Structure probing data (DMS and 2A3) for a 177-nucleotide construct. The RNA was probed in 150 mM KOAc, 10 mM MgCl2 and 150 mM bicine (pH 8.5) at 24 C. Reactivities are given for positions 27 through 126. The data come from the RNA Mapping Database (RMDB), libraries RFM100 and RFMREP.
[RMDB]
RNA sequence: GGGAACGACUCGAGUAGAGUCGAAAAUACUAACCGAGCUAUCUGUAUCCUCGUCUUGUUUAAAGGCUUGUGAUAUGCUGUGGUAGUUGGGUUGCAGAAGUGCGAUAUUAAAGUAAAAGCCAUGAGUAACACAAACAAUAUUCGUAUUGUUUGUGUUAAAAGAAACAACAACAACAAC
Reactivity to DMS in 0.01 (KOAc 150mM, MgCl2 10mM, bicine 150mM(pH8.5), 24C), signal-to-noise 9, nucleotides 027 to 126: u010a070c060u010a030a050c010c000g010a030g000c010u000a010u000c020u010g000u000a010u000c010c010u000c140g010u000c010u000u010g010u020u030u040a080a020a020g000g000c000u000u000g000u030g010a020u000a000u010g020c250u020g020u020g010g010u000a010g010u000u000g010g010g010u000u000g010c050a040g000a100a090g010u000g010c020g000a110u010a100u010u010a060a080a070g010u010a040a060a090a120g010c030c030a070u010g000a120g010u010
Reactivity to 2A3 in 0.01 (KOAc 150mM, MgCl2 10mM, bicine 150mM(pH8.5), 24C), signal-to-noise 9, nucleotides 027 to 126: u090a010c030u020a010a030c000c020g050a000g000c000u010a010u030c020u070g010u010a010u000c000c000u010c000g050u010c020u050u170g180u280u280u300a090a040a000g000g000c000u010u020g040u070g040a000u010a010u080g030c090u150g060u120g050g000u010a010g010u000u020g130g000g000u020u050g000c030a020g010a220a010g100u050g060c020g020a010u030a040u170u210a170a090a040g080u070a080a090a040a010g030c020c020a060u130g060a020g100u030